This 207-nucleotide RNA was probed chemically with 2A3 and DMS. The DMS profile rests on 3,182 reads. 2A3 adducts were read by reverse transcription with SuperScript II with manganese.
[RMDB]
RNA sequence: GGGAACGACUCGAGUAGAGUCGAAAAGCAGUUCAGAAGUAUAAGGACAACAAACAGAUCCCAAGUUGUCCUUAUAACUGGACUGAGUAGAGUUAGUUGUAUAGCAUACUCUUGGGAUCUGUUGUAUGCUAUAUACUUCUAACUCUUCGAACUGAGACACUACGUACUUCUUCGGAAGUACGUAGUGAAAAGAAACAACAACAACAAC
Reactivity to 2A3 in 0.01 (KOAc 150mM, MgCl2 10mM, bicine 150mM(pH8.5), 24C), signal-to-noise 1, nucleotides 027 to 156: g090c000a000g000u020u010c000a020g010a180a010g150u060a010u000a020a010g020g010a010c000a000a000c020a060a080a020c010a030g010a020u000c010c000c000a010a050g000u010u000g010u010c000c000u000u000a000u000a000a000c000u030g000g030a000c000u010g000a010g050u100a000g010a000g000u000u010a000g000u020u020g010u050a030u000a010g000c000a000u000a030c010u040c040u150u070g010g000g010a010u000c000u000g060u070u090g010u010a010u010g000c000u000a000u000a000u000a020c020u000u000c000u000a000a000c000u000c000u040u050c020g050a050a010c070u040g020a010g110a090
Reactivity to DMS in 0.01 (KOAc 150mM, MgCl2 10mM, bicine 150mM(pH8.5), 24C), signal-to-noise 1, nucleotides 027 to 156: g000c020a030g030u000u000c010a000g010a110a100g020u000a050u000a030a040g030g010a030c000a040a050c010a070a130a070c040a000g020a050u000c000c000c010a090a300g010u000u000g000u000c000c010u000u020a000u010a010a070c030u000g000g010a010c000u010g000a100g030u000a010g000a040g030u000u000a000g020u000u000g000u000a010u000a050g000c020a070u000a050c020u000c090u000u000g000g040g020a000u000c020u010g010u000u000g030u000a020u000g000c000u000a010u000a070u000a060c040u010u000c000u000a010a010c020u000c010u000u000c040g040a120a180c070u000g000a210g010a300